The record gives the reactivity of an RNA of 177 nucleotides to DMS. For DMS, 1,765 sequencing reads were counted.
RNA sequence: GGGAACGACUCGAGUAGAGUCGAAAAGAAAGUAGCGACUUACUAACCGGUAAGGACGGAAAAACAUACCGCGAAAGUAUGGAAGCGUAAAAGGCUAAGAUAGGCCGAACUAUCAAGCUACGAAAAAGGGUUAACUUGAGUUCGCUCAAGUUAACCCAAAAGAAACAACAACAACAAC
Reactivity to DMS in 0.01 (KOAc 150mM, MgCl2 10mM, bicine 150mM(pH8.5), 24C), signal-to-noise 2, nucleotides 027 to 126: g000a060a070a210g000u000a040g020c010g000a160c000u000u000a000c010u000a070a300c300c040g060g000u070a000a200g000g020a060c220g000g110a070a030a210a170a060c020a090u000a000c000c040g000c140g000a110a150a060g010u000a000u050g000g000a020a090g000c090g000u000a100a090a080a180g000g000c000u000a090a090g000a000u000a040g000g000c090c000g000a090a170c010u010a000u000c010a020a110g030c000u000a000c020g010a030a060a050a080a130
The RNA was probed in 150 mM KOAc, 10 mM MgCl2 and 150 mM bicine (pH 8.5) at 24 C. Reactivities are given for positions 27 through 126.